[RMDB]
RNA sequence: GGGAACGACUCGAGUAGAGUCGAAAAGGAGGAACCUUCGGGUUCCUCCCAUAACCGAGAACCUUGCUCGGUAUAAACAAGGAACCCUUGGAAACAAGGGAAAUAUUCACGUCUUCGGACGUGAAAACGAUCUUAGGAAGUUCGCUUCCUAAGAUCGAAAAGAAACAACAACAACAAC
Reactivity to DMS in 0.01 (KOAc 150mM, MgCl2 10mM, bicine 150mM(pH8.5), 24C), signal-to-noise 2, nucleotides 027 to 126: g010g040a000g010g020a010a000c020c000u020u000c230g010g000g000u000u010c000c000u000c000c000c020a060u000a080a300c000c000g010a000g010a100a070c000c010u000u000g010c000u000c000g020g010u020a050u000a020a090a120c030a000a000g000g010a120a300c000c000c000u000u000g020g000a140a150a150c010a020a000g000g000g020a010a120a070u010a130u000u010c000a000c000g030u000c000u000u010c180g020g020a030c000g000u000g000a000a010a100a160
An RNA of 177 nucleotides, treated with DMS and read out base by base. The RNA was probed in 150 mM KOAc, 10 mM MgCl2 and 150 mM bicine (pH 8.5) at 24 C. Reactivities are given for positions 27 through 126.